Chemical mapping of a 177-nucleotide RNA with 2A3 and DMS. The reactions ran in a buffer of 150 mM KOAc, 10 mM MgCl2 and 150 mM bicine (pH 8.5), at 24 C. The data come from the RNA Mapping Database (RMDB), library 15KREP. 2A3 adducts were read by reverse transcription with SuperScript II with manganese.
RNA sequence: GGGAACGACUCGAGUAGAGUCGAAAAUAAGAAUAGAGCUCGCACUGUUGCAGGCGUGUCCAUACUUAGCACAAUGACUAAUCGCCAGUACCAUCAGAAAAUGCUUAAGUCCAUGGCUGCAACUCGUUCACAACAUAAACUUCGGUUUAUGUUGUGAAAAAGAAACAACAACAACAAC
Reactivity to 2A3 in 0.01 (KOAc 150mM, MgCl2 10mM, bicine 150mM(pH8.5), 24C), signal-to-noise 2, nucleotides 027 to 126: u080a020a030g030a040a020u070a110g060a010g060c020u010c060g030c020a080c110u090g020u040u020g040c020a010g060g010c020g000u040g010u000c050c000a030u050a120c010u030u020a010g000c010a010c030a030a130u050g050a040c020u060a080a020u100c050g010c040c000a000g010u020a030c040c010a030u020c010a000g090a070a080a010a040u050g020c000u100u070a020a010g030u020c040c010a020u030g080g020c000u020g000c000a010a020c030u000c030g030u000
Reactivity to DMS in 0.01 (KOAc 150mM, MgCl2 10mM, bicine 150mM(pH8.5), 24C), signal-to-noise 2, nucleotides 027 to 126: u000a070a160g010a100a100u000a090g010a120g000c030u010c060g000c070a120c220u000g000u020u000g000c080a060g000g020c010g020u000g010u010c080c080a100u020a060c060u000u000a020g030c070a050c170a130a100u000g000a040c050u000a110a030u000c060g020c050c020a050g000u000a040c090c040a100u010c070a040g010a040a100a150a080u000g020c030u000u010a050a060g020u000c120c020a040u010g010g020c010u000g020c030a000a060c020u000c200g000u000